[RMDB]
Chemical mapping of a 177-nucleotide RNA with 2A3 and DMS.

RNA sequence: GGGAACGACUCGAGUAGAGUCGAAAACAAUCUAAACACUCAGACAGCCAAGGGGCAUUUAGAUGGCACGUCAUGACCAGGGAUUUUAUGACAGGCACUCUUAGGAUCUUCACCUGCUUGCAAGACCUCAUGAGUGAUCAUUCGUGAUCACUCAUGAAAAAGAAACAACAACAACAAC
Reactivity to 2A3 in 0.01 (KOAc 150mM, MgCl2 10mM, bicine 150mM(pH8.5), 24C), signal-to-noise 2, nucleotides 027 to 126: c010a010a020u050c020u220a100a070a000c060a030c040u050c050a020g050a210c020a020g040c000c000a080a060g080g000g010g000c020a010u070u040u000a070g010a110u070g030g020c030a030c020g040u050c030a050u060g040a060c030c040a030g100g000g000a040u110u020u060u070a010u110g040a010c030a030g050g020c020a010c020u060c010u060u030a030g010g050a070u050c000u010u020c030a040c030c040u040g000c040u010u020g000c020a010a020g040a080c010c000
Reactivity to DMS in 0.01 (KOAc 150mM, MgCl2 10mM, bicine 150mM(pH8.5), 24C), signal-to-noise 2, nucleotides 027 to 126: c100a120a100u010c080u010a090a050a080c110a130c060u000c030a110g000a070c100a070g030c020c050a090a080g010g010g000g020c040a060u010u010u000a050g010a050u010g010g020c040a070c090g020u010c040a040u000g010a060c100c030a060g000g000g000a060u000u000u000u000a030u030g000a040c050a090g000g010c050a020c080u000c040u000u000a090g000g000a040u010c030u000u010c080a040c040c030u000g010c020u000u000g010c080a040a050g000a080c130c040